This 177-nucleotide RNA was probed chemically with DMS and 2A3.
[RMDB]
RNA sequence: GGGAACGACUCGAGUAGAGUCGAAAAGUACGCAGACGGAAGAUACGCCUUCAGAAGCGAGUUAAAUACGGCAGAAACGAUGACGUGCCUGAUGGCGCCUCGUUUAUCAGGCAAGGCCGGAUAAGUCCGAAAAUUAUAGCUUCGGCUAUAAUUUUCGAAAAGAAACAACAACAACAAC
Reactivity to DMS in 0.01 (KOAc 150mM, MgCl2 10mM, bicine 150mM(pH8.5), 24C), signal-to-noise 5, nucleotides 027 to 126: g020u040a080c060g000c010a090g010a150c260g000g020a030a040g000a180u030a060c190g000c110c020u020u000c050a080g020a190a070g000c020g010a140g010u040u030a060a060a060u040a050c030g000g000c010a070g000a040a070a070c060g010a080u020g020a080c070g020u000g000c000c020u000g020a040u010g020g020c010g020c110c050u030c050g020u010u020u020a030u010c030a020g000g000c030a100a120g000g010c010c010g000g000a050u010a080a120g000u010c060
Reactivity to 2A3 in 0.01 (KOAc 150mM, MgCl2 10mM, bicine 150mM(pH8.5), 24C), signal-to-noise 6, nucleotides 027 to 126: g040u040a040c050g000c030a030g030a050c040g070g030a020a020g030a080u160a120c080g060c010c010u040u050c040a060g010a120a010g040c030g030a020g070u070u130a040a080a060u140a070c020g000g010c000a030g200a080a100a010c070g050a100u160g060a050c070g050u040g010c000c010u060g030a040u060g010g000c000g050c070c060u140c020g010u010u020u080a050u030c020a010g000g010c030a020a040g090g000c000c030g010g010a080u060a120a010g080u050c050

For 2A3 the reverse transcriptase was SuperScript II with manganese. Values cover nucleotides 27 to 126. DMS adducts were read by reverse transcription with MarathonRT. The RNA was probed in 150 mM KOAc, 10 mM MgCl2 and 150 mM bicine (pH 8.5) at 24 C. It was measured as part of the RMDB library OK1LIB.